[RMDB]
RNA sequence: GGGAACGACUCGAGUAGAGUCGAAAAGUUCCCCUGAUGUCCAGUCCCUCCCCGUUCCUGGAGAAGGGAGACUCGGGAACGCCUAGCAUCUGAGGGACAAAGCCGCCCCCGGGCGCUCCCCUCGGAGAAAGUCCCGUGUUCGCACGGGACAAAAGAAACAACAACAACAAC
Reactivity to DMS in 0.01 (KOAc 150mM, MgCl2 10mM, bicine 150mM(pH8.5), 24C), signal-to-noise 4, nucleotides 027 to 129: g040u020u030c030c010c000c200u040g020a000u040g050u020c030c040a060g000u010c040c000c000u020c000c010c050c020g000u040u030c000c000u000g040g030a070g000a000a130g050g020g050a140g020a060c040u030c050g070g030g010a030a030c100g030c080c030u020a140g060c130a070u010c040u060g010a030g000g000g000a070c050a000a170a080g010c060c060g050c020c000c000c050c210g030g020g030c030g030c040u010c020c000c000c010u010c030g090g010a060g050a050a080a070
Reactivity to 2A3 in 0.01 (KOAc 150mM, MgCl2 10mM, bicine 150mM(pH8.5), 24C), signal-to-noise 4, nucleotides 027 to 129: g000u020u020c000c010c000c000u050g040a040u220g090u040c020c010a060g050u020c010c010c010u010c000c010c010c000g050u130u060c020c030u070g110g010a080g000a100a100g050g010g010a030g020a000c000u020c010g000g000g000a020a020c000g050c010c040u060a060g030c060a080u000c010u010g000a030g010g010g010a010c040a050a040a000g030c070c020g010c010c010c000c020c050g040g000g000c000g000c000u010c000c000c000c000u000c000g000g000a010g020a020a080a000